[RMDB]
An RNA of 177 nucleotides, treated with 2A3 and DMS and read out base by base.
2A3 adducts were read by reverse transcription with SuperScript II with manganese.
For 2A3, 938 sequencing reads were counted.
For DMS, 1,571 sequencing reads were counted.
The reactions ran in a buffer of 150 mM KOAc, 10 mM MgCl2 and 150 mM bicine (pH 8.5), at 24 C.
RNA sequence: GGGAACGACUCGAGUAGAGUCGAAAACCUCUUUCCUUUGCCCAUACUGGGGACCAAGGAAGUGUCAAGUGCAUGAGUGAAUGUGUGACUCAGUUCAGAGGGUGAGGUCAGGAGCACAGGGUCGGGACCCUCGAAGAUUGUUCGCAAUCUUCGAGGGAAAAGAAACAACAACAACAAC
Reactivity to 2A3 in 0.01 (KOAc 150mM, MgCl2 10mM, bicine 150mM(pH8.5), 24C), signal-to-noise 1, nucleotides 027 to 126: c010c010u040c020u030u030u050c030c000u050u030u070g020c080c000c010a060u110a300c100u110g070g000g060g040a080c030c040a050a060g060g030a080a050g080u040g050u040c100a120a140g160u100g220c050a080u010g050a010g110u070g120a030a120u080g070u020g080u080g120a080c000u030c080a010g010u100u060c050a020g090a070g040g100g020u080g000a010g080g010u030c030a020g070g000a030g000c010a010c000a060g080g000g030u060c000g010g030g110a070
Reactivity to DMS in 0.01 (KOAc 150mM, MgCl2 10mM, bicine 150mM(pH8.5), 24C), signal-to-noise 2, nucleotides 027 to 126: c020c000u010c050u000u000u010c000c000u000u010u010g010c030c000c010a180u010a120c250u000g020g010g010g010a060c170c070a040a050g000g000a060a050g030u000g000u000c100a060a110g020u000g020c060a050u000g000a080g030u000g020a050a090u020g000u010g010u000g010a120c020u000c030a080g000u010u000c080a100g020a120g010g000g020u000g010a100g000g010u000c040a090g000g010a110g040c070a060c040a060g010g010g020u000c030g020g000g010a300